[RMDB]
RNA sequence: GGGAACGACUCGAGUAGAGUCGAAAACGCUCUUUCGAGAGCGCACAGAGCGUACUACGCACCAUCCAGUUCGUUGAAACUACCCACCUUGUCCCAAAUAGGACAAGAGGUGGAGAACUGGUGGUGCGUAUCGCGUGGCCGGGCCUUCGGGCCCGAAAAUCAAUUGGAUGUUCGCAUCCAAUUGAUUAAAAGAAACAACAACAACAAC
Reactivity to DMS in 0.01 (KOAc 150mM, MgCl2 10mM, bicine 150mM(pH8.5), 24C), signal-to-noise 2, nucleotides 027 to 156: c030g000c000u000c000u000u000u000c270g010a040g030a030g000c020g030c000a100c140a180g030a220g020c020g040u000a130c070u020a030c010g000c000a030c000c000a030u020c020c000a040g020u000u000c020g030u020u000g000a170a200a190c050u000a080c010c000c000a170c150c000u000u000g000u000c000c010c030a050a160a300u020a030g020g020a020c000a000a010g010a070g030g010u000g020g000a120g000a000a010c010u000g010g020u010g000g000u000g000c020g010u000a000u000c020g010c000g020u000g000g030c040c040g020g050g000c000c000u010u050c240g070g010g010c000c000c000g000a010a010
Reactivity to 2A3 in 0.01 (KOAc 150mM, MgCl2 10mM, bicine 150mM(pH8.5), 24C), signal-to-noise 3, nucleotides 027 to 156: c030g000c030u020c020u090u130u220c290g100a030g000a020g000c020g070c020a060c040a130g180a060g030c000g000u070a120c040u000a000c010g030c000a000c000c000a030u300c020c000a010g000u000u000c020g120u270u200g130a120a110a060c040u050a050c000c010c030a050c040c000u030u030g000u050c000c000c000a250a250a160u300a140g000g000a000c010a000a030g020a030g060g020u010g030g020a110g000a010a000c000u000g000g000u000g010g000u000g000c000g000u000a000u040c000g010c000g020u020g030g000c050c000g000g000g000c000c000u050u060c190g000g000g020c000c000c040g000a000a000